[RMDB]
RNA sequence: GGGAACGACUCGAGUAGAGUCGAAAAGCGAUAGCGUUCGCGCUAUCGCAAAUAAUUUCAGCGGUUUAAAUUUCGAGGCCAUAACCGCUGAUGGCCUCGAAAAAACUCGACAGUUCGCUGUCGAGAAUCCAUAAACUUACUUCGGUAAGUUUAUGGAAAAAGAAACAACAACAACAAC
Reactivity to DMS in 0.01 (KOAc 150mM, MgCl2 10mM, bicine 150mM(pH8.5), 24C), signal-to-noise 4, nucleotides 027 to 126: g010c000g010a000u000a020g020c000g030u010u010c200g030c000g030c000u000a000u000c000g010c000a010a030a050u000a070a090u000u000u000c030a050g010c060g000g010u000u000u000a030a110a150u000u000u000c010g010a010g010g000c000c000a020u000a070a080c040c050g000c050u000g010a010u000g000g010c000c000u000c000g000a000a000a020a080a090a090c010u000c000g010a010c000a000g010u000u010c190g020c000u000g000u000c000g000a010g000a050a050
Reactivity to 2A3 in 0.01 (KOAc 150mM, MgCl2 10mM, bicine 150mM(pH8.5), 24C), signal-to-noise 3, nucleotides 027 to 126: g000c010g000a000u010a010g010c010g010u030u070c210g020c010g010c080u000a000u000c000g000c000a010a010a010u000a000a020u020u110u070c020a020g030c010g070g100u060u210u300a080a180a080u100u130u070c030g010a000g000g000c000c000a010u020a050a060c020c010g000c020u000g000a000u010g010g010c000c000u010c010g000a000a000a000a000a000a010c000u000c000g000a000c000a000g010u040u070c140g030c110u010g000u000c000g000a000g000a000a030